[RMDB]
Source: RMDB library TTRINS, as collected in RNAgym.
Structure probing data (DMS) for a 177-nucleotide construct.
The reactions ran in a buffer of 150 mM KOAc, 10 mM MgCl2 and 150 mM bicine (pH 8.5), at 24 C.
DMS adducts were read by reverse transcription with MarathonRT.
RNA sequence: GGGAACGACUCGAGUAGAGUCGAAAAGAUAUGGAGGUGUAUUGUUCGAUGAAGUCCUUAGACUAUCCGUAUUCGGAAACGAAUACGGAUAGUCUAAGGAUGGAGAAUGUACACGCCUCCUAAGUCACAGUUAGUAAAGCUUCGGCUUUACUAACUGAAAAGAAACAACAACAACAAC
Reactivity to DMS in 0.01 (KOAc 150mM, MgCl2 10mM, bicine 150mM(pH8.5), 24C), signal-to-noise 2, nucleotides 027 to 126: g010a030u000a300u000g040g010a000g000g010u010g030u010a070u010u010g030u000u000c000g000a140u030g020a220a300g000u000c010c000u000u000a000g000a020c000u000a000u020c000c000g020u020a010u010u000c010g000g000a090a090a190c010g010a040a000u000a000c000g010g000a010u010a010g010u000c000u000a000a010g000g000a000u000g010g000a020g000a040a010u000g030u020a020c140a040c050g000c020c000u000c000c000u010a040a080g000u000c040a210